[RMDB]
RNA sequence: GGGAACGACUCGAGUAGAGUCGAAAACGUAUUCUUGCACCCUGACCUGCUCCGGCUCCUCAGCCCACGGGUAAUGCCCUGCGAUGGUAUCGUUGCUAGCUACCUGCAUAAGCGUUGGUGGGAACUGUCCCAAGGGGAUGUUCGCAUCCCCUUGGGAAAAAGAAACAACAACAACAAC
Reactivity to DMS in 0.01 (KOAc 150mM, MgCl2 10mM, bicine 150mM(pH8.5), 24C), signal-to-noise 1, nucleotides 027 to 126: c150g020u000a130u000u010c050u010u020g000c080a180c010c020c010u000g000a090c040c020u000g010c020u000c040c050g000g000c050u000c010c060u000c060a070g010c000c010c010a070c040g050g010g000u000a060a130u000g000c030c030c000u020g020c020g010a090u000g010g020u000a190u010c020g050u010u010g000c020u000a100g040c060u000a040c040c040u010g010c080a070u020a060a080g000c050g020u000u000g020g010u010g000g010g000a120a100c050u000g020
An RNA of 177 nucleotides, treated with DMS and read out base by base. For DMS, 1,174 sequencing reads were counted. The reactions ran in a buffer of 150 mM KOAc, 10 mM MgCl2 and 150 mM bicine (pH 8.5), at 24 C.